[RMDB]
RNA sequence: GGGAACGACUCGAGUAGAGUCGAAAAGAUAUGGAGCAGCUUCUCGAGGUACUCGUACGAACCCGCUAUAUCGGAAACGAUAUAGCGGGUUUUGAAAGUACUACCCACCGAGGGCUGCUCCUAAGUCGAAUAUGAUCUCGUUCGCGAGAUCAUAUUCAAAAGAAACAACAACAACAAC
Reactivity to DMS in 0.01 (KOAc 150mM, MgCl2 10mM, bicine 150mM(pH8.5), 24C), signal-to-noise 1, nucleotides 027 to 126: g000a040u000a260u030g040g000a000g010c010a070g000c000u000u020c010u000c000g000a110g030g010u000a000c010u000c080g030u000a300c280g000a010a010c000c000c010g000c000u000a030u000a010u000c000g050g000a110a060a170c000g030a010u000a000u010a030g020c000g010g020g000u010u010u010u000g000a190a130a030g010u000a010c000u000a030c020c090c150a300c070c000g000a020g010g010g000c000u000g000c010u000c000c000u000a000a060g010u010c080

Overview: The record gives the reactivity of an RNA of 177 nucleotides to DMS. The reactions ran in a buffer of 150 mM KOAc, 10 mM MgCl2 and 150 mM bicine (pH 8.5), at 24 C. DMS adducts were read by reverse transcription with MarathonRT. The data come from the RNA Mapping Database (RMDB), library TTRINS.